This 207-nucleotide RNA was probed chemically with 2A3 and DMS. The 2A3 profile rests on 1,534 reads. Reactivities are given for positions 27 through 156. The DMS profile rests on 2,394 reads. Values are in units of 0.01, from 0 to 300, in steps of 10. For 2A3 the reverse transcriptase was SuperScript II with manganese. As a SHAPE reagent, 2A3 marks flexible, mostly unpaired nucleotides at the ribose 2'-OH.
RNA sequence: GGGAACGACUCGAGUAGAGUCGAAAAGGACAUUUGUUAAAUGUAGGAAUUUUAAGAGACUCAGGGCGCCAGCUAACCAAUGGCUUAACAGGUCACUAUCAACAAAUGACCAAUAAGCAAUAACAGACUGCUUCAACAACAAAGAGAGUUAAAGUCCAAUUUAACAAGUCUUCGGACUUGUUAAAUUAAAAGAAACAACAACAACAAC
Reactivity to 2A3 in 0.01 (KOAc 150mM, MgCl2 10mM, bicine 150mM(pH8.5), 24C), signal-to-noise 3, nucleotides 027 to 156: g030g000a020c030a030u080u090u050g040u090u140a100a180a130u080g030u050a070g050g050a130a100u060u080u080u110a200a100g020a010g010a060c010u040c100a030g040g020g020c050g000c020c010a000g030c030u030a010a050c000c030a070a110u040g020g020c000u020u060a080a030c060a060g000g000u010c000a000c040u090a080u270c030a040a070c010a050a160a060u040g010a010c000c000a000a050u060a000a020g000c010a040a050u090a170a050c030a020g070a050c020u050g020c000u100u060c020a100a120c010a010a000c010a050a230a050g060a000g020a010g070u080u110a120a030a010g060u020c020c050
Reactivity to DMS in 0.01 (KOAc 150mM, MgCl2 10mM, bicine 150mM(pH8.5), 24C), signal-to-noise 2, nucleotides 027 to 156: g060g040a100c020a080u000u000u020g010u010u010a090a050a080u000g020u000a050g040g010a120a030u000u010u000u000a060a200g010a190g010a080c020u000c020a060g020g000g030c050g000c080c050a130g000c060u000a060a080c040c060a160a120u000g010g000c020u020u000a060a100c110a300g020g000u000c000a020c020u010a300u000c080a060a070c180a110a070a050u000g020a060c020c010a030a140u000a050a070g000c040a070a090u000a070a060c040a080g010a080c030u000g000c040u020u000c060a020a070c060a080a130c060a030a070a030g000a080g000a070g020u000u000a030a060a080g020u000c030c020